[RMDB]
RNA sequence: GGGAACGACUCGAGUAGAGUCGAAAAUGCACUGACCUUCGUACCGAUCUAUCUGGGGUACGUGGACGGCGCGUCGGCGACCGCGUCAGGUCUGCGCACGUUGCCGAUGGUGAUCGGCCUGCUGAUCCUGCAUCCGAUACUUCGGUAUCGGAUGCAGAAAAGAAACAACAACAACAAC
Reactivity to DMS in 0.01 (KOAc 150mM, MgCl2 10mM, bicine 150mM(pH8.5), 24C), signal-to-noise 2, nucleotides 027 to 126: u010g000c020a070c060u030g000a140c040c010u000u000c020g030u000a030c010c010g000a150u010c120u000a080u000c160u000g000g010g000g020u000a010c030g060u000g010g010a150c060g000g100c010g030c030g030u000c050g010g010c050g000a040c090c050g000c130g000u020c060a070g000g000u010c050u010g010c050g000c020a020c160g030u000u000g030c010c040g000a090u000g030g000u000g010a050u000c030g000g010c020c030u010g000c010u010g010a100u000c040
Reactivity to 2A3 in 0.01 (KOAc 150mM, MgCl2 10mM, bicine 150mM(pH8.5), 24C), signal-to-noise 2, nucleotides 027 to 126: u130g010c030a030c110u110g040a110c000c010u090u050c000g010u030a010c030c000g120a150u070c050u190a150u050c080u260g150g010g000g000u010a010c010g000u040g030g040a040c000g010g000c010g030c000g050u020c070g050g060c020g000a030c010c000g020c030g070u060c040a010g120g020u010c060u060g000c020g000c010a030c060g020u080u190g040c030c010g010a020u030g070g060u050g030a090u010c000g020g000c030c020u060g000c010u000g010a030u030c030
Source information:
This 177-nucleotide RNA was probed chemically with DMS and 2A3. The RNA was probed in 150 mM KOAc, 10 mM MgCl2 and 150 mM bicine (pH 8.5) at 24 C.